[RMDB]
RNA sequence: GGGAACGACUCGAGUAGAGUCGAAAAGCCAGUCAGCGGGCGCUACCAUGCAAACUAGGGCUGGCUACUCUUGCACAGAAUCACCUUUCUAUAAUAACCAGUGCAAGAAGGGUUAUUAUACCAUUUAAAAAUCGUGAAUGCUUCGGCAUUCACGAAACCAUGAGGACCAGUUCGCUGGUCCUCAUGGAAAAGAAACAACAACAACAAC
Reactivity to 2A3 in 0.01 (KOAc 150mM, MgCl2 10mM, bicine 150mM(pH8.5), 24C), signal-to-noise 2, nucleotides 027 to 156: g010c000c000a000g010u000c020a030g080c130g030g070g000c060g020c020u190a280c120c170a070u290g000c000a070a130a060c030u090a060g050g000g040c000u000g010g000c000u000a000c000u000c000u000u000g000c020a000c000a020g070a060a040u130c050a250c040c010u130u300u190c120u090a020u000a000a000u000a000a000c000c000a000g000u000g010c000a000a000g010a010a000g010g000g000u010u000a000u010u010a010u000a020c020c020a120u130u190u300a000a120a050a050a090u060c010g000u010g000a010a020u000g010c000u030u040c060g060g000c000a010u010u020c000a000c000g010a000a000a000